[RMDB]
The record gives the reactivity of an RNA of 177 nucleotides to DMS and 2A3.
The DMS profile rests on 32,160 reads.
The RNA was probed in 150 mM KOAc, 10 mM MgCl2 and 150 mM bicine (pH 8.5) at 24 C.
2A3 is a SHAPE reagent: it acylates the 2'-hydroxyl of flexible nucleotides of all four kinds.
The data come from the RNA Mapping Database (RMDB), library M2PK90.
RNA sequence: GGGAACGACUCGAGUAGAGUCGAAAAGACAAAUGCAGCAUAUUAGGCUAAGCAGGAAAGGGACGGUAGCUCCUGGUGUCAGUUCAUACGGUGAGAUGCAUCUGCGUCGUGCACACAUGCACCCAAACUAGAUAAGUGGAUUCGUCCACUUAUCUAGAAAAGAAACAACAACAACAAC
Reactivity to DMS in 0.01 (KOAc 150mM, MgCl2 10mM, bicine 150mM(pH8.5), 24C), signal-to-noise 9, nucleotides 027 to 126: g000a080c080a050a080a090u010g010c040a040g010c040a060u000a100u010u010a090g020g000c030u000a060a100g010c030a040g010g000a050a080a090g010g000g010a060c070g010g010u000a060g010c060u000c030c030u000g010g010u000g000u000c050a060g000u000u000c050a050u000a080c120g010g000u000g010a080g010a070u000g010c030a070u010c080u010g010c050g010u000c100g010u000g010c030a050c080a050c110a090u000g010c070a100c000c010c030a040a060a200
Reactivity to 2A3 in 0.01 (KOAc 150mM, MgCl2 10mM, bicine 150mM(pH8.5), 24C), signal-to-noise 9, nucleotides 027 to 126: g070a010c040a020a100a020u120g020c010a010g000c010a040u070a110u270u180a120g090g000c010u050a060a040g010c010a020g030g060a080a050a040g040g000g020a020c040g020g040u050a020g020c030u010c010c030u040g050g000u040g030u060c050a030g020u070u060c030a030u090a140c070g050g000u070g040a090g000a040u050g020c010a050u010c040u100g010c010g040u080c030g040u080g010c010a010c010a010c010a040u080g010c000a060c000c010c000a030a070a060